The record gives the reactivity of an RNA of 207 nucleotides to 2A3 and DMS. 2A3 adducts were read by reverse transcription with SuperScript II with manganese. For DMS, 3,934 sequencing reads were counted.
RNA sequence: GGGAACGACUCGAGUAGAGUCGAAAAAGUCGAGAUCUCUCCUUCCUGAGACUUCCUGAGACUUCCUUCCUUCGACUCUUCGAAGGAGAGAAGGAGAGAAGGAAGUCCUCUCUUCGAAGUCCUCUAGAGAGUCAGCUCUUCUCCUCUCUUCAGUCUCCACAAGAGUUAUGUUCGCAUAACUCUUGUGAAAAGAAACAACAACAACAAC
Reactivity to 2A3 in 0.01 (KOAc 150mM, MgCl2 10mM, bicine 150mM(pH8.5), 24C), signal-to-noise 5, nucleotides 027 to 156: a000g060u060c040g000a020g000a150u030c010u000c010u010c030c030u120u100c020c070u070g010a040g000a040c000u010u020c010c040u060g010a030g000a030c000u010u000c000c000u000u000c000c000u000u000c010g010a030c010u000c010u070u060c090g270a210a150g090g010a000g010a000g000a000a010g000g010a010g010a020g000a000a000g000g000a000a000g010u020c030c000u000c000u000c000u060u090c050g010a010a010g010u050c070c030u010c030u050a010g010a000g000a000g040u080c090a040g020c010u010c000u060u020c020u010c000c000u030c020u010c000u100u050c040a090g100u120c150u140c050
Reactivity to DMS in 0.01 (KOAc 150mM, MgCl2 10mM, bicine 150mM(pH8.5), 24C), signal-to-noise 1, nucleotides 027 to 156: a070g030u000c070g000a050g010a070u010c020u010c010u000c040c020u000u000c030c040u000g020a080g010a070c000u000u000c000c020u050g010a090g020a100c020u000u000c000c010u000u010c010c010u010u000c000g020a300c040u000c050u010u000c040g040a140a240g000g010a020g000a040g020a030a300g010g000a020g000a130g000a050a020g030g000a060a050g010u000c050c010u010c030u010c060u000u000c050g000a060a050g030u000c040c020u000c030u000a040g000a070g000a030g000u000c020a080g030c060u000c050u000u030c010u000c040c030u010c000u000c040u000u020c030a060g000u000c000u000c300
DMS adducts were read by reverse transcription with MarathonRT.